Annotation
This 177-nucleotide RNA was probed chemically with DMS. Reactivities are rounded to 0.1 and cut off at 0 and 3. Reactivities are given for positions 27 through 126. Conditions: 150 mM KOAc, 10 mM MgCl2 and 150 mM bicine (pH 8.5), 24 C. DMS adducts were read by reverse transcription with MarathonRT.
RNA sequence: GGGAACGACUCGAGUAGAGUCGAAAAGAUAUGGAGGCUUGUCAGGAAUACAGCUGAGUAACUAAGCAAGUCGGAAACGACUUGAACGCGUUACCAGCUGUAUUCCUUGGAUUUAGCCUCCUAAGUCCUAUCAGGAAGUGUUCGCACUUCCUGAUAGAAAAGAAACAACAACAACAAC
Reactivity to DMS in 0.01 (KOAc 150mM, MgCl2 10mM, bicine 150mM(pH8.5), 24C), signal-to-noise 3, nucleotides 027 to 126: g000a120u000a270u000g020g010a020g000g010c000u000u000g000u000c010a050g000g000a010a000u000a010c000a000g000c000u000g010a180g020u000a000a000c000u000a300a170g000c000a010a000g010u000c000g010g010a160a150a230c000g010a020c000u000u000g000a020a090c160g030c240g010u000u000a010c000c000a020g000c000u000g020u000a010u000u000c000c010u000u010g010g000a030u000u010u010a030g020c010c000u000c000c010u020a020a070g010u000c030